Structure probing data (DMS and 2A3) for a 177-nucleotide construct. It was measured as part of the RMDB library VIROID. DMS adducts were read by reverse transcription with MarathonRT. For 2A3, 1,193 sequencing reads were counted.

RNA sequence: GGGAACGACUCGAGUAGAGUCGAAAAGGGGCUAGCCGUCAGGUGUUCCUCCCCCCGAGAAGACGCGAGUGAGGCUUAUCCCGGGGAACCCGGCGAAUCGUCCCCACAUAGCAGAUCCCAGGACCCCCUUAGAAACAUUGUUCGCAAUGUUUCUAAGAAAAGAAACAACAACAACAAC
Reactivity to DMS in 0.01 (KOAc 150mM, MgCl2 10mM, bicine 150mM(pH8.5), 24C), signal-to-noise 4, nucleotides 027 to 126: g000g000g010g010c050u000a050g010c180c010g000u000c050a070g040g010u020g010u010u000c020c010u000c010c010c010c000c000c020g010a110g010a060a080g000a080c100g010c060g010a100g020u000g000a090g000g010c040u000u000a110u000c020c010c020g020g000g010g010a050a040c000c020c020g010g020c010g010a040a100u000c080g010u000c000c000c000c020a090c110a100u000a090g010c100a080g000a150u010c010c000c000a160g010g010a250c010c010c000c050
Reactivity to 2A3 in 0.01 (KOAc 150mM, MgCl2 10mM, bicine 150mM(pH8.5), 24C), signal-to-noise 1, nucleotides 027 to 126: g000g040g000g000c030u060a050g060c030c010g040u060c100a120g000g050u080g040u080u000c020c030u060c040c000c000c020c000c000g140a080g040a100a000g110a020c010g000c030g030a070g040u150g060a020g070g000c020u060u030a100u070c020c020c020g000g010g020g010a010a000c000c000c000g020g000c020g000a040a030u050c020g030u160c000c000c040c000a010c010a000u090a000g070c000a000g050a130u000c000c000c000a020g070g020a110c010c000c020c020